Source: RMDB library OK1LIB, as collected in RNAgym. The record gives the reactivity of an RNA of 177 nucleotides to DMS and 2A3. The RNA was probed in 150 mM KOAc, 10 mM MgCl2 and 150 mM bicine (pH 8.5) at 24 C. For 2A3, 2,255 sequencing reads were counted.
RNA sequence: GGGAACGACUCGAGUAGAGUCGAAAAUUAUGCUGGUCAAGAGAAAGAUUAACAUACUUUCUGGAAUCAGAACCUUUCUUGUAUGAAAUCUUUAGGUAUCUUAUUGGAAAAGACAUCACAAAUAAGCCAUACUCCCGGUAUUCGUACCGGGAGUAUGAAAAGAAACAACAACAACAAC
Reactivity to DMS in 0.01 (KOAc 150mM, MgCl2 10mM, bicine 150mM(pH8.5), 24C), signal-to-noise 4, nucleotides 027 to 126: u040u040a040u020g010c000u000g020g040u000c040a200a130g020a050g000a030a010a030g010a080u000u030a120a140c300a120u020a060c010u000u010u010c010u010g000g020a120a040u000c010a000g000a060a140c080c020u000u000u010c080u000u010g020u010a040u030g000a030a080a030u020c010u020u040u010a070g010g010u050a080u010c010u000u000a020u020u030g010g000a110a050a040a060g010a080c100a060u030c060a020c110a050a030a040u030a040a040g000c300
Reactivity to 2A3 in 0.01 (KOAc 150mM, MgCl2 10mM, bicine 150mM(pH8.5), 24C), signal-to-noise 5, nucleotides 027 to 126: u110u050a120u140g030c030u030g030g080u050c090a150a060g050a020g040a230a030a010g030a060u120u080a140a070c060a060u220a100c010u000u020u010c010u010g070g120a160a080u040c030a030g020a090a070c000c000u060u130u090c040u130u150g040u030a090u060g110a030a090a040u040c000u020u140u100a080g000g050u100a060u040c050u010u040a070u090u200g090g050a060a130a000a030g090a050c040a070u080c020a040c020a080a130a080u170a110a000g040c030